Notes: The record gives the reactivity of an RNA of 177 nucleotides to DMS. It was measured as part of the RMDB library M2PK90.
[RMDB]
RNA sequence: GGGAACGACUCGAGUAGAGUCGAAAAUACUAGCAUUCGGUUCCAACCCUGGAUGGAUACUCAUAGGUUGGCUGAGUUCCUUCCUCCGGCCUUGGUUCCGAUGCUCCAUCCAAGGCCGGAAACCAAAAUAGGAGGAGAGAUUCGUCUCUCCUCCUAUAAAAGAAACAACAACAACAAC
Reactivity to DMS in 0.01 (KOAc 150mM, MgCl2 10mM, bicine 150mM(pH8.5), 24C), signal-to-noise 2, nucleotides 027 to 126: u000a100c090u000a080g010c030a060u000u000c050g010g010u000u000c030c040a040a150c070c000c060u010g010g010a030u010g010g020a050u010a040c050u000c030a060u000a090g000g010u010u000g020g000c220u000g000a060g000u000u000c010c010u000u000c030c050u000c000c020g020g000c020c010u000u000g000g000u000u010c060c060g020a060u000g000c030u000c070c070a070u000c000c000a010a010g010g020c020c000g000g000a030a040a070c130c110a030a060a120
The DMS profile rests on 2,240 reads.